[RMDB]
RNA sequence: GGGAACGACUCGAGUAGAGUCGAAAAGCGAUCUGGCUGCGACAUCUGUCACCCCAUUGAUCGCCAGGGUUGAUUCGGCUGAUCUGGCUGGCUAGGCGGGUGUCCCCUUCCUCCCUCACCGCUCCAUCCCGAAUCAGGCGUUCGCGCCUGAUUCGGGAAAAGAAACAACAACAACAAC
Reactivity to 2A3 in 0.01 (KOAc 150mM, MgCl2 10mM, bicine 150mM(pH8.5), 24C), signal-to-noise 2, nucleotides 027 to 126: g030c040g040a070u060c030u080g030g020c020u080g100c130g020a020c000a000u040c000u060g040u000c000a180c090c040c000c000a010u080u140g010a030u000c010g000c000c000a040g020g030g070u070u160g230a220u040u120c050g000g000c040u110g000a010u040c020u010g090g010c140u080g000g030c070u070a050g000g000c010g000g030g000u050g000u020c000c000c000c030u000u010c000c000u030c000c000c000u000c000a050c010c000g050c000u030c000c030a110u100